[RMDB]
RNA sequence: GGGAACGACUCGAGUAGAGUCGAAAACUAUCUCACUUCCCCUCGUUCUCUUGCAGAACUUUGAUUUUAACGAACUUAAAUAAAAGCCCUGUUGUUUAGCGUAUCGUUGCACUUGUCUGGUGGGAUUUAACAUUGCGCUUCGGCGCAAUGAAAAGAAACAACAACAACAAC
Reactivity to 2A3 in 0.01 (KOAc 150mM, MgCl2 10mM, bicine 150mM(pH8.5), 24C), signal-to-noise 1, nucleotides 027 to 129: c000u020a150u060c020u000c000a020c000u020u010c000c000c000c060u000c000g000u070u050c050u000c000u010u060g030c050a060g070a110a150c010u040u050u030g250a260u060u030u110u000a010a000c000g000a050a060c060u000u030a130a010a000u030a000a280a020a000g000c000c000c000u060g000u100u000g000u000u020u020a220g030c170g050u000a000u160c000g000u000u110g000c000a030c020u150u150g060u000c000u000g020g000u010g050g010g010a030u000u000u050a060a070
Reactivity to DMS in 0.01 (KOAc 150mM, MgCl2 10mM, bicine 150mM(pH8.5), 24C), signal-to-noise 3, nucleotides 027 to 129: c120u010a140u020c050u010c030a000c100u000u050c020c020c000c040u030c050g040u000u030c050u000c020u070u040g030c150a000g030a150a170c000u070u000u010g010a020u000u000u000u000a030a100c260g030a090a300c070u100u000a030a010a030u020a000a000a000a000g040c000c000c000u030g040u000u030g000u010u000u000a020g010c170g020u000a100u030c050g010u040u030g000c000a040c130u000u020g010u030c040u050g030g070u000g020g010g010a110u000u000u000a050a140

An RNA of 170 nucleotides, treated with 2A3 and DMS and read out base by base. Reactivities are given for positions 27 through 129. The RNA was probed in 150 mM KOAc, 10 mM MgCl2 and 150 mM bicine (pH 8.5) at 24 C. DMS adducts were read by reverse transcription with MarathonRT.